[RMDB]
RNA sequence: GGGAACGACUCGAGUAGAGUCGAAAACCCGGGGGGCGUCCCGCCUCCCACCCCGCCUCUGGACUUGUCUCUUUCUCCGCGCGCGCGGACAGAGCCGGCGUUUAGGCCCGAGCGAGCCCGGGGGCCGCCCAUUCAUGGAUUUCGAUCCAUGAAUGGGAAAAGAAACAACAACAACAAC
Reactivity to 2A3 in 0.01 (KOAc 150mM, MgCl2 10mM, bicine 150mM(pH8.5), 24C), signal-to-noise 5, nucleotides 027 to 126: c000c000c000g000g000g000g000g000g000c010g050u220c130c100c020g010c000c000u000c000c000c000a050c000c030c000c030g020c000c010u000c000u010g010g000a030c000u080u000g100u180c010u000c010u020u220u040c060u010c020c010g020c010g030c020g030c030g020c010g060g010a060c050a040g110a020g070c020c010g030g010c030g030u050u090u200a130g020g030c000c020c030g000a010g000c010g000a000g000c000c010c000g000g010g000g000g000c000c020g020
Reactivity to DMS in 0.01 (KOAc 150mM, MgCl2 10mM, bicine 150mM(pH8.5), 24C), signal-to-noise 2, nucleotides 027 to 126: c020c000c030g050g000g020g000g000g000c000g000u040c120c100c040g010c010c000u020c000c000c000a080c020c010c050c060g010c040c030u010c010u000g020g010a020c010u000u040g020u000c010u010c030u030u000u030c110u000c000c010g020c050g040c270g000c160g010c040g000g000a050c150a060g000a120g000c260c070g010g010c080g010u040u030u010a140g000g010c010c080c100g000a080g020c030g010a010g000c000c000c000g010g010g000g000g000c010c110g010
The record gives the reactivity of an RNA of 177 nucleotides to 2A3 and DMS. The data come from the RNA Mapping Database (RMDB), libraries RFM100 and RFMREP. The RNA was probed in 150 mM KOAc, 10 mM MgCl2 and 150 mM bicine (pH 8.5) at 24 C.